[RMDB]
RNA sequence: GGGAACGACUCGAGUAGAGUCGAAAACAAACAAGAAAACGGCAGUGCGGUAAAUCUGCCGAUACCGUAAGCCUGCAGCCUAAAACAAAUGGCGAACGUCAACAGGCAAGACGUAAACAAAACAAAAAUAUCCGUCCUGAUUCGUCAGGACGGAUAUAAAAGAAACAACAACAACAAC
Reactivity to 2A3 in 0.01 (KOAc 150mM, MgCl2 10mM, bicine 150mM(pH8.5), 24C), signal-to-noise 3, nucleotides 027 to 126: c040a020a030a020c050a050a070g210a080a100a010a000c000g030g000c010a030g030u080g140c070g110g020u110a100a070a000u020c000u040g000c000c000g000a000u010a010c030c000g020u000a000a020g000c000c020u030g000c010a040g000c000c000u090a120a100a040a110c100a020a120a040u100g020g000c080g020a080a020c050g110u070c050a060a050c000a070g100g000c000a000a040g040a010c010g020u090a020a020a100c060a020a040a040a010c050a010a040a040a010
Reactivity to DMS in 0.01 (KOAc 150mM, MgCl2 10mM, bicine 150mM(pH8.5), 24C), signal-to-noise 3, nucleotides 027 to 126: c040a100a070a110c140a110a140g080a080a060a120a030c040g000g000c000a020g040u000g040c180g000g010u050a050a120a040u000c030u010g010c000c000g000a100u040a070c140c040g000u000a090a120g020c020c000u000g000c070a130g020c000c000u010a050a050a230a210c300a040a050a200u020g000g000c000g010a150a090c190g000u060c120a060a300c000a010g000g030c030a050a130g050a050c000g000u030a040a060a100c230a090a000a010a140c120a030a040a020a050

Notes:
An RNA of 177 nucleotides, treated with 2A3 and DMS and read out base by base. For 2A3, 3,154 sequencing reads were counted.